[RMDB]
RNA sequence: GGGAACGACUCGAGUAGAGUCGAAAACAGGAAACUGGUUAAUCGUUUUCCUUGGUCGUAUAGCGGAAACCAUAAAUAAGAAGAACUCUAAGUGCUUGAGUAGAGUUAAAAUAAUUAGACAGGCAAUUAAGGUACUCCACGUUCGCGUGGAGUACAAGGUCUCAAUUGUCUUCGGACAAUUGAGACCAAAAGAAACAACAACAACAAC
Reactivity to 2A3 in 0.01 (KOAc 150mM, MgCl2 10mM, bicine 150mM(pH8.5), 24C), signal-to-noise 1, nucleotides 027 to 156: c010a000g110g040a020a000a020c050u220g000g050u220u210a090a150u240c080g010u060u090u030u040c010c010u020u020g030g030u010c010g010u020a070u170a220g030c060g000g060a150a050a050c020c020a020u140a140a090a010u160a030a130g180a030a030g010a020a070c000u000c000u000a010a010g010u020g090c000u010u050g000a000g020u000a000g000a010g010u080u150a000a000a000a000u060a000a000u140u000a000g000a000c000a000g000g000c000a020a020u210u220a170a040g060g000u000a000c030u000c000c000a000c000g000u000u020c180g030c000g070u000g000g000a000g000u000a000c000a000a000
Structure probing data (2A3) for a 207-nucleotide construct. The 2A3 profile rests on 382 reads. The reactions ran in a buffer of 150 mM KOAc, 10 mM MgCl2 and 150 mM bicine (pH 8.5), at 24 C.